[RMDB]
RNA sequence: GGGAACGACUCGAGUAGAGUCGAAAAGAUAUGGACCCACGUGUUCCUAUACACUUUUGACGACGCAAUGGGUCGGAAACGACCUGACGUCGAUAAGUGUAUAGGAACACGUAAGGGUCCUAAGUCACAGGUUAUAUUGGUUCGCCAAUAUAACCUGAAAAGAAACAACAACAACAAC
Reactivity to DMS in 0.01 (KOAc 150mM, MgCl2 10mM, bicine 150mM(pH8.5), 24C), signal-to-noise 4, nucleotides 027 to 126: g020a040u020a300u000g010g010a010c000c000c000a090c010g030u000g010u000u000c000c000u000a000u000a000c010a020c000u000u000u010u030g020a280c160g010a030c040g010c100a140a110u020g000g000g000u000c000g000g000a100a090a240c000g010a000c000c000u000g000a060c000g010u000c000g000a090u000a000a020g020u010g010u000a000u010a000g000g000a010a000c000a000c000g010u000a020a080g010g000g020u000c000c000u000a010a080g000u010c050a270
Reactivity to 2A3 in 0.01 (KOAc 150mM, MgCl2 10mM, bicine 150mM(pH8.5), 24C), signal-to-noise 1, nucleotides 027 to 126: g070a060u150a050u230g000g000a000c000c010c010a010c020g020u030g000u000u000c000c050u000a000u000a010c030a000c000u000u090u100u270g300a230c070g000a020c000g050c070a150a150u300g080g000g000u000c070g000g000a070a070a030c000g010a000c000c050u180g110a080c000g010u000c010g000a000u070a000a000g000u020g000u010a010u000a000g000g010a000a000c000a000c000g000u000a020a020g000g020g020u000c000c000u000a060a010g030u000c000a030
An RNA of 177 nucleotides, treated with DMS and 2A3 and read out base by base. The reactions ran in a buffer of 150 mM KOAc, 10 mM MgCl2 and 150 mM bicine (pH 8.5), at 24 C. The DMS profile rests on 5,476 reads. It was measured as part of the RMDB library TTRINS.